An RNA of 177 nucleotides, treated with 2A3 and read out base by base.
It was measured as part of the RMDB library OK2TST.
2A3 adducts were read by reverse transcription with SuperScript II with manganese.
The RNA was probed in 150 mM KOAc, 10 mM MgCl2 and 150 mM bicine (pH 8.5) at 24 C.
RNA sequence: GGGAACGACUCGAGUAGAGUCGAAAAUCGAUGCUUCAGGCAACUAUAUCUACCCUGCGCUCGGACCAGAUGGGCAAGCGCUCCCGACCGACGAUGCGGGAAAUUUGGUAUAUCCAAUCGUCUAUCCGUAUGAUCUCGCGUUCGCGCGAGAUCAUACAAAAGAAACAACAACAACAAC
Reactivity to 2A3 in 0.01 (KOAc 150mM, MgCl2 10mM, bicine 150mM(pH8.5), 24C), signal-to-noise 1, nucleotides 027 to 126: u080c010g010a030u030g020c020u080u190c060a070g040g080c020a060a030c090u070a010u040a060u130c020u040a090c000c000c030u050g010c020g000c020u010c050g030g070a120c070c020a050g140a300u240g020g000g010c080a060a010g070c000g030c070u000c000c000c000g000a010c000c000g000a010c000g010a000u080g070c110g030g020g070a060a030a040u100u160u030g060g010u080a080u030a040u190c000c000a020a000u030c040g010u000c010u100a090u120c050c020